[RMDB]
The data come from the RNA Mapping Database (RMDB), library OK3TST.
Structure probing data (2A3 and DMS) for a 207-nucleotide construct.
The 2A3 profile rests on 1,615 reads.
For DMS, 6,878 sequencing reads were counted.
The reactions ran in a buffer of 150 mM KOAc, 10 mM MgCl2 and 150 mM bicine (pH 8.5), at 24 C.
RNA sequence: GGGAACGACUCGAGUAGAGUCGAAAACGGGGUUGGCUAUAGUUGAUUUCGAACCGUAUGCUUAUGUAUAUGGAAUGAUUUGUACGCUUUACGCAUGUGUACACUCACUCUCAGUUCACUCUUGUGAGAGAAGGGAGAGAGAGAUAUUUUGCGAUUAGGUAUCGUUGAUCUUCGGAUUGGUGAUAUCAAAAGAAACAACAACAACAAC
Reactivity to 2A3 in 0.01 (KOAc 150mM, MgCl2 10mM, bicine 150mM(pH8.5), 24C), signal-to-noise 1, nucleotides 027 to 156: c040g010g000g000g000u060u050g030g010c040u050a030u040a080g030u000u040g030a180u010u040u050c030g010a020a040c000c000g000u000a000u000g000c010u130u090a080u200g010u000a010u000a000u030g010g000a060a050u080g020a080u040u040u090g020u010a000c000g000c010u070u030u040a010c010g000c000a010u010g000u000g000u000a010c000a040c000u000c000a020c000u000c000u000c010a040g050u010u010c020a030c000u030c000u130u180g050u120g080a000g000a000g010a010a020g080g000g000a000g000a000g000a010g000a000g000a010u010a050u090u150u060u060g010c010g010a020u020u110a030
Reactivity to DMS in 0.01 (KOAc 150mM, MgCl2 10mM, bicine 150mM(pH8.5), 24C), signal-to-noise 2, nucleotides 027 to 156: c040g020g020g030g000u000u000g020g060c060u010a090u010a100g000u010u000g010a140u000u000u000c020g000a080a220c020c010g000u000a030u000g000c010u000u000a080u010g060u000a020u000a040u010g010g020a080a110u010g000a100u000u000u000g000u000a070c060g010c060u010u000u000a160c070g000c040a060u000g030u010g050u000a010c000a140c080u000c010a160c020u010c020u000c010a090g000u020u000c020a090c020u000c020u000u020g000u000g020a080g020a090g020a050a110g000g010g000a050g010a040g010a060g010a030g040a080u000a030u000u000u000u000g000c020g000a130u000u000a090